RNA sequence: GGGAACGACUCGAGUAGAGUCGAAAAGUCGCUCUUGUCGGUGGGUGGGUUGGCGAUCCGGCCGUUCAUGAUGUCCGCAACCAGUGCCACCAGACCAUUGCGGGCUUCGUCGCGGCGACGGAAGCUCCCUCUUAUACUGUUUCGACAGUAUAAGAGGAAAAGAAACAACAACAACAAC
Reactivity to 2A3 in 0.01 (KOAc 150mM, MgCl2 10mM, bicine 150mM(pH8.5), 24C), signal-to-noise 8, nucleotides 027 to 126: g040u020c010g020c040u030c030u090u100g100u110c040g040g080u110g070g030g120u150g030g030g020u070u150g030g010c030g030a070u030c020c000g030g020c010c000g020u060u090c060a050u100g040a010u030g010u010c010c000g000c010a020a040c060c070a070g030u080g180c020c020a070c010c010a040g100a040c000c010a020u010u060g000c030g010g000g000c000u010u020c010g020u010c020g000c020g060g000c040g040a050c010g020g010a010a010g010c010u050c020
Reactivity to DMS in 0.01 (KOAc 150mM, MgCl2 10mM, bicine 150mM(pH8.5), 24C), signal-to-noise 9, nucleotides 027 to 126: g010u000c030g010c020u000c040u000u010g010u000c080g010g020u000g010g010g020u010g010g000g010u000u000g010g010c040g000a080u000c030c020g000g000c010c010g020u000u010c120a040u000g000a030u000g010u000c010c010g010c010a030a030c150c120a120g020u000g010c020c020a090c150c140a110g000a070c040c080a200u000u010g010c020g000g000g000c010u000u000c010g020u000c160g000c050g000g000c020g010a080c030g010g000a070a200g010c060u000c100
This 177-nucleotide RNA was probed chemically with 2A3 and DMS.